RNA sequence: GGGAACGACUCGAGUAGAGUCGAAAAGAUUACGUGUCGUUGUGGAAUCGAUACUACUCACGAGAUUCCAAGGUCUCUGUAGUACGUCCGCUGGUGACGUCUUUGGAGUCACGUUCGAUAUACGAAAGGUAUCUAGAUGGUUCGCCAUCUAGAUACCAAAAGAAACAACAACAACAAC
Reactivity to 2A3 in 0.01 (KOAc 150mM, MgCl2 10mM, bicine 150mM(pH8.5), 24C), signal-to-noise 6, nucleotides 027 to 126: g070a060u100u140a060c090g020u030g020u030c040g010u040u110g010u030g050g040a020a010u060c010g020a030u020a090c000u010a010c010u020c010a030c030g040a040g000a030u050u040c110c040a050a040g090g010u030c020u000c030u110g060u050a020g030u070a030c010g000u000c010c030g060c150u180g090g110u170g030a010c010g080u030c020u060u030u100g060g000a020g000u000c010a010c060g010u070u080c030g000a010u020a000u000a130c030g070a090a050a010
Reactivity to DMS in 0.01 (KOAc 150mM, MgCl2 10mM, bicine 150mM(pH8.5), 24C), signal-to-noise 4, nucleotides 027 to 126: g000a110u020u020a060c120g030u000g010u000c010g000u000u010g010u000g000g000a070a010u010c000g000a120u000a070c020u010a010c020u000c060a300c050g000a060g010a030u000u000c060c070a080a050g000g010u010c020u010c040u020g000u000a030g040u020a010c010g010u000c010c010g010c150u020g010g020u030g000a020c040g000u000c020u010u030u000g010g000a070g020u000c000a030c010g020u020u000c020g020a020u010a050u040a110c040g000a060a080a100